[RMDB]
Record summary
This 177-nucleotide RNA was probed chemically with DMS. The DMS profile rests on 972 reads. The RNA was probed in 150 mM KOAc, 10 mM MgCl2 and 150 mM bicine (pH 8.5) at 24 C. The data come from the RNA Mapping Database (RMDB), library OK2TRN.
RNA sequence: GGGAACGACUCGAGUAGAGUCGAAAACAGGCGGCAUCUGUUGGCGCGCUGCAUGACACCGGCAAGGCGCAGGCCGUGGCCGACAGCCUGGAUUACACUGCUGGAUCCUACGAACAAUCAGGUGAGGGAAUCUUGGUACGUUCGCGUACCAAGAUUCAAAAGAAACAACAACAACAAC
Reactivity to DMS in 0.01 (KOAc 150mM, MgCl2 10mM, bicine 150mM(pH8.5), 24C), signal-to-noise 1, nucleotides 027 to 126: c120a050g000g030c090g020g000c040a110u000c080u010g000u010u000g020g050c070g030c010g000c040u000g080c010a070u050g010a170c160a100c010c010g000g030c190a130a050g010g050c050g010c050a060g020g000c010c000g030u000g020g010c020c030g020a080c050a120g000c030c040u000g000g000a080u000u000a050c130a090c010u000g000c050u000g000g000a060u000c010c010u000a070c170g000a050a050c040a030a110u030c070a040g040g030u010g010a160g020g010